[RMDB]
The record gives the reactivity of an RNA of 207 nucleotides to 2A3.
The reactions ran in a buffer of 150 mM KOAc, 10 mM MgCl2 and 150 mM bicine (pH 8.5), at 24 C.
The 2A3 profile rests on 636 reads.
Source: RMDB library PDB130, as collected in RNAgym.
RNA sequence: GGGAACGACUCGAGUAGAGUCGAAAAGUGGCGCGCGCCUGUAGUCCCAGCUACUCGGGAGGCUGAGGCAGGAGGAUCGCUUGAGCCCAGGAGUUCUGGGCUGCAGUGCGCUAUGCCGAUCGGGUGUCCGCACUAAGUUCGGCAUCAAUAUGGUGACGAUAGGUGCAAAGUUCGCUUUGCACCUAUCAAAAGAAACAACAACAACAAC
Reactivity to 2A3 in 0.01 (KOAc 150mM, MgCl2 10mM, bicine 150mM(pH8.5), 24C), signal-to-noise 1, nucleotides 027 to 156: g030u040g000g070c080g000c000g000c020g000c050c030u010g000u000a000g100u200c020c020c000a000g000c070u080a010c070u000c010g060g060g000a200g010g010c030u000g030a000g010g020c070a030g040g040a090g010g030a130u230c060g010c050u030u050g070a000g000c000c000c000a050g100g000a000g000u040u060c000u000g030g000g000c020u010g040c000a000g000u000g000c000g000c000u000a000u000g040c000c000g020a040u050c060g040g030g000u000g000u010c100c080g030c050a030c020u200a270a000g080u090u040c010g000g000c020a020u010c040a060a000u090a060u180g120g010u110g070a060c110